[RMDB]
RNA sequence: GGGAACGACUCGAGUAGAGUCGAAAACCUCACUACAUUUUACUGUUCCUAAAGAAUUUGUGACAGGUACAGUAAAACGUUUUGCAAGGUUUAUCAGUUCCUAUAAACAGGUAAAUAACAAUAUAUGAAAAGCAAAGACUGUUCGCAGUCUUUGCAAGUUAGGGUUUACCUUCGGGUAAACCCUAACAAAAGAAACAACAACAACAAC
Reactivity to 2A3 in 0.01 (KOAc 150mM, MgCl2 10mM, bicine 150mM(pH8.5), 24C), signal-to-noise 1, nucleotides 027 to 156: c000c000u000c010a000c000u010a000c000a030u000u050u000u000a000c000u010g000u000u010c000c000u120a160a210a060g160a300a300u190u300u300g120u070g120a040c040a080g000g000u000a000c000a000g000u000a000a000a000a000c000g000u000u000u040u040g040c010a010a120g020g000u010u020u070a120u120c040a030g000u050u050c010c010u030a070u280a080a040a010c070a000g170g030u020a170a270a060u120a080a080c030a040a150u090a010u040a010u280g060a090a090a130a000g000c000a000a000a000g000a000c020u000g040u050u100c190g050c100a000g000u010c000u000u000u000g000c000a010a010